[RMDB]
RNA sequence: GGGAACGACUCGAGUAGAGUCGAAAACGGCAAAAAAGCAAACUUGACCACCAAGGAUAAAAGAGAUCUUAUCCAAGGAUGCAAAAGAUAAUCUCACUUUUCACACCCACUGAUCUCGAACUUAAAGAAAACCGAGACUACUUCGGUAGUCUCGGAACAUUCAGGCUUUCUUCGGAAAGCCUGAAUGAAAAGAAACAACAACAACAAC
Reactivity to 2A3 in 0.01 (KOAc 150mM, MgCl2 10mM, bicine 150mM(pH8.5), 24C), signal-to-noise 2, nucleotides 027 to 156: c010g040g010c070a000a060a060a020a000a020g070c050a090a070a090c050u100u080g050a140c010c030a010c010c000a060a030g010g000a020u010a020a030a020a020g010a010g000a010u000c000u000u020a000u000c000c010a000a020g040g000a030u070g020c020a000a010a090a060g010a050u100a120a230u070c090u030c080a080c030u050u040u060u080c020a040c010a030c040c010c000a070c100u080g020a010u020c010u000c020g020a080a100c070u170u200a090a130a080g100a010a070a010a000c000c000g000a000g000a000c000u020a020c000u010u050c110g040g010u000a000g000u000c000u010c000g000g000a000a000

This 207-nucleotide RNA was probed chemically with 2A3. For 2A3, 1,147 sequencing reads were counted. It was measured as part of the RMDB library M2RFPK.